[RMDB]
RNA sequence: GGGAACGACUCGAGUAGAGUCGAAAAAGGACCGGGAUGGACGAACCUCUGGUGUGUCAGUUGUUCUGCCAAGAGCACGGCUGAUUAGCUACGUUCGGAAGUGAUAACCGCUGAAAGCAUCUAAGCGCCCUCCUCAAUACUUCGGUAUUGAGGAGGGAAAAGAAACAACAACAACAAC
Reactivity to 2A3 in 0.01 (KOAc 150mM, MgCl2 10mM, bicine 150mM(pH8.5), 24C), signal-to-noise 1, nucleotides 027 to 126: a020g090g000a070c060c010g060g050g040a030u020g000g050a010c020g020a030a000c000c020u000c010u060g000g000u040g010u020g010u050c010a010g000u000u050g060u110u070c050u030g080c040c000a190a030g040a020g010c000a000c020g040g000c010u000g000a040u100u030a010g000c010u010a000c120g000u010u020c020g000g000a000a020g020u020g080a080u050a150a050c060c030g030c020u020g020a120a070a010g050c020a030u000c040u100a080a060g020c020g010
Reactivity to DMS in 0.01 (KOAc 150mM, MgCl2 10mM, bicine 150mM(pH8.5), 24C), signal-to-noise 3, nucleotides 027 to 126: a070g030g050a060c070c030g010g020g010a070u000g010g020a200c030g010a030a010c020c010u000c010u010g010g030u000g000u000g000u020c010a020g020u000u000g010u000u010c050u010g000c140c230a070a080g010a070g020c050a080c300g010g010c000u000g010a030u010u010a290g010c000u000a030c120g000u000u010c000g010g010a150a060g030u010g000a130u010a100a100c120c050g020c020u000g000a050a090a080g000c030a050u000c020u010a110a090g000c110g010
This 177-nucleotide RNA was probed chemically with 2A3 and DMS. The reactions ran in a buffer of 150 mM KOAc, 10 mM MgCl2 and 150 mM bicine (pH 8.5), at 24 C. Values cover nucleotides 27 to 126. Source: RMDB library OK2TRN, as collected in RNAgym. DMS adducts were read by reverse transcription with MarathonRT. As a SHAPE reagent, 2A3 marks flexible, mostly unpaired nucleotides at the ribose 2'-OH.